[RMDB]
RNA sequence: GGGAACGACUCGAGUAGAGUCGAAAAUCGGCUUGUCUGGGCCAAGUUCUAAUUCCUUCCAGGAGCGUGGGCACGUUGCUUACCUCUUAGCUGUUUCUUCUCCAGGAAGUGGUGGAGCUGGAGCCUGAAAGAGGCAACUAUUCGUAGUUGCCUCUUUAAAAGAAACAACAACAACAAC
Reactivity to DMS in 0.01 (KOAc 150mM, MgCl2 10mM, bicine 150mM(pH8.5), 24C), signal-to-noise 3, nucleotides 027 to 126: u010c100g010g010c060u010u010g010u000c080u000g000g010g000c050c030a170a030g000u000u000c030u000a090a120u000u000c060c010u000u010c040c020a120g020g010a050g010c300g010u000g000g000g030c030a100c190g020u000u000g010c030u000u000a080c090c070u010c090u010u000a060g020c090u000g000u000u000u010c020u000u000c010u000c010c000a070g010g000a060a060g010u000g020g010u010g010g000a060g010c000u000g000g010a180g020c130c060u010g020
Reactivity to 2A3 in 0.01 (KOAc 150mM, MgCl2 10mM, bicine 150mM(pH8.5), 24C), signal-to-noise 1, nucleotides 027 to 126: u060c000g020g000c040u020u040g080u120c060u120g050g040g020c030c030a000a000g030u040u000c000u060a070a180u070u130c000c020u000u130c000c040a020g020g030a010g050c070g050u110g000g020g020c050a020c150g140u240u280g000c050u070u040a110c020c030u050c020u110u010a040g000c020u020g100u030u060u030c030u000u000c000u010c000c020a000g020g010a060a040g040u020g070g030u040g000g020a010g000c000u000g010g020a010g050c000c050u040g000